[RMDB]
RNA sequence: GGGAACGACUCGAGUAGAGUCGAAAAUCAGUUGUUUCUCUGAAGGCAUGAUCACCCCGUCCGAUGCGGAAGUUCGUGCUUCCGUCGAACGCGAAAGUCGGACGGCGGCCAUGAGUCGCAACGCAAAUAUACAUUUAGUAGUUCGCUACUAAAUGAAGGAUAUAUAGUGGUUCGCCACUAUAUAUCCAAAAGAAACAACAACAACAAC
Reactivity to 2A3 in 0.01 (KOAc 150mM, MgCl2 10mM, bicine 150mM(pH8.5), 24C), signal-to-noise 6, nucleotides 027 to 156: u130c040a000g000u020u010g000u010u020u000c030u000c030u080g130a150a060g100g000c020a030u050g020a040u100c030a050c020c010c000c000g000u010c000c000g000a010u040g010c010g020g010a010a010g020u140u300c170g130u300g090c000u000u010c000c000g010u030c030g060a150a060c100g010c030g140a130a060a010g030u010c000g000g010a000c030g000g000c020g000g000c010c010a060u070g020a030g120u090c040g000c120a060a060c060g010c090a020a130a010u190a020u020a050c000a000u000u000u000a000g000u000a000g000u000u080c190g030c130u000a000c000u000a000a000a000u000g010a040a030
Reactivity to DMS in 0.01 (KOAc 150mM, MgCl2 10mM, bicine 150mM(pH8.5), 24C), signal-to-noise 2, nucleotides 027 to 156: u000c030a090g030u000u020g010u000u010u000c010u000c020u010g010a150a070g000g040c030a030u000g010a090u010c130a110c030c010c020c010g000u000c010c010g060a070u000g040c030g010g000a020a030g000u000u000c160g030u020g010c030u000u000c000c010g070u000c050g020a050a170c140g030c050g020a130a150a120g020u000c010g000g000a070c000g010g040c030g000g010c030c020a070u010g010a090g010u000c040g000c030a060a050c020g070c060a060a050a110u010a140u000a180c000a010u000u000u000a010g010u000a010g030u000u010c300g040c000u000a030c020u000a000a020a010u000g010a100a170
This 207-nucleotide RNA was probed chemically with 2A3 and DMS. The data come from the RNA Mapping Database (RMDB), library M2RFPK. For DMS, 3,295 sequencing reads were counted. The reactions ran in a buffer of 150 mM KOAc, 10 mM MgCl2 and 150 mM bicine (pH 8.5), at 24 C. Values cover nucleotides 27 to 156.